[RMDB]
RNA sequence: GGGAACGACUCGAGUAGAGUCGAAAAAUUUGGAAGCGGCGUCGCUCGCAACUGCAUACCAACAGACGGUGAAAGAGGAGCGCAAUUUUCAAGAGUCUUUUAAUAAUCAUGUGAGGACACUGCUGUCUCGCGAAGAAGUCUGUAUAGGCUUGAUGCAUACGUUAUUCUGAUUCGUCAGAAUAACGUAAAAAGAAACAACAACAACAAC
Reactivity to 2A3 in 0.01 (KOAc 150mM, MgCl2 10mM, bicine 150mM(pH8.5), 24C), signal-to-noise 4, nucleotides 027 to 156: a000u150u110u150g050g000a090a010g000c040g030g010c050g070u120c100g040c090u040c040g020c000a040a020c020u070g000c030a090u130a120c000c040a050a040c040a060g060a040c050g070g000u110g050a060a110a050g060a030g030g050a030g020c100g000c040a070a060u090u090u090u130c060a110a020g020a010g090u020c000u030u140u100u150a220a160u190a080a080u130c070a070u100g050u050g070a020g000g020a000c010a010c080u090g040c020u010g090u040c030u020c030g050c020g010a060a080g060a040a010g030u000c000u020g090u130a070u170a100g000g000c020u030u030g060a050u100g050c020a010
Reactivity to DMS in 0.01 (KOAc 150mM, MgCl2 10mM, bicine 150mM(pH8.5), 24C), signal-to-noise 2, nucleotides 027 to 156: a160u010u010u010g000g010a090a090g000c200g040g040c020g010u010c030g000c070u000c040g030c060a100a070c040u000g020c010a150u010a100c110c030a090a060c090a070g000a060c040g000g010u000g000a070a120a110g000a120g010g010a030g020c050g040c040a000a020u000u010u010u010c080a070a090g010a160g000u000c020u010u000u010u000a070a160u000a120a110u030c080a120u010g030u010g020a080g000g010a090c060a050c080u000g000c030u000g000u000c020u010c050g020c050g000a110a080g000a070a050g000u000c010u000g010u000a130u000a070g020g000c030u010u010g000a160u010g030c060a280